[RMDB]
RNA sequence: GGGAACGACUCGAGUAGAGUCGAAAAGGUGCUAUGUAAAAAUAUCUCUUACUUACAAAAACUUUUGGCAAAUAAACUUCAAACUAUAGAAGGAGUUCAAAGUACUCAUACUAUUAUAUGCCUUCUAGAAAAGAUUGAUAGAAACAUAGACUUACAAGUAUACCCUGAGUUUCGACUCAGGGUAUACAAAAGAAACAACAACAACAAC
Reactivity to 2A3 in 0.01 (KOAc 150mM, MgCl2 10mM, bicine 150mM(pH8.5), 24C), signal-to-noise 1, nucleotides 027 to 156: g050g000u060g090c000u000a000u000g000u100a090a000a140a200a140u020a040u120c000u030c040u020u090a080c010u190u020a000c100a070a230a100a100a070c110u190u300u080u140g040g000c020a000a000a230u110a030a280a000c000u040u000c020a180a110a110c040u020a190u060a120g100a080a020g020g000a000g000u000u070c080a210a190a000g000u040a060c000u000c080a040u140a160c010u050a040u240u000a070u040a040u210g020c000c010u060u040c050u020a080g060a060a070a000a020g080a020u070u090g000a000u000a140g040a000a210a000c010a000u030a010g040a020c040u030u030a100c150a150a080
Background:
The data come from the RNA Mapping Database (RMDB), library OK3TST. This 207-nucleotide RNA was probed chemically with 2A3. Reactivities are given for positions 27 through 156.